Structure probing data (DMS and 2A3) for a 177-nucleotide construct. 2A3 adducts were read by reverse transcription with SuperScript II with manganese.
RNA sequence: GGGAACGACUCGAGUAGAGUCGAAAAUCCUAACGCUUCGGCGUUAGGAAAAGUUUAUUGGCAGAUUAACAUGUUAGAAUUAGAAUCUAACUAGUCUAAAAAAAACUGCGUGGUUCGCCACGCAGAAGUGUUAUUAUCUGUUCGCAGAUAAUAACACAAAAGAAACAACAACAACAAC
Reactivity to DMS in 0.01 (KOAc 150mM, MgCl2 10mM, bicine 150mM(pH8.5), 24C), signal-to-noise 3, nucleotides 027 to 126: u000c000c000u010a000a010c000g020c010u000u010c170g020g010c000g000u000u010a010g010g000a000a020a060a090g000u010u010u000a070u010u000g000g010c210a040g000a050u000u000a070a140c120a120u010g000u000u000a010g010a030a090u020u030a140g010a140a130u010c000u000a010a000c000u000a080g000u000c020u010a000a000a010a060a040a060a070a180c010u000g010c000g030u000g000g010u010u010c180g010c000c000a010c000g000c000a010g000a010a060
Reactivity to 2A3 in 0.01 (KOAc 150mM, MgCl2 10mM, bicine 150mM(pH8.5), 24C), signal-to-noise 4, nucleotides 027 to 126: u010c000c000u010a000a000c010g000c010u030u040c150g150g010c010g000u000u000a000g000g000a000a020a000a050g060u110u170u110a220u120u100g070g000c050a020g040a120u090u080a100a030c020a100u100g000u000u010a010g020a010a020u160u090a090g080a250a130u020c010u000a000a010c000u000a030g020u020c040u120a060a030a020a000a020a020a030a080c000u030g000c020g000u000g000g030u010u080c170g030c050c000a000c000g000c010a000g000a010a000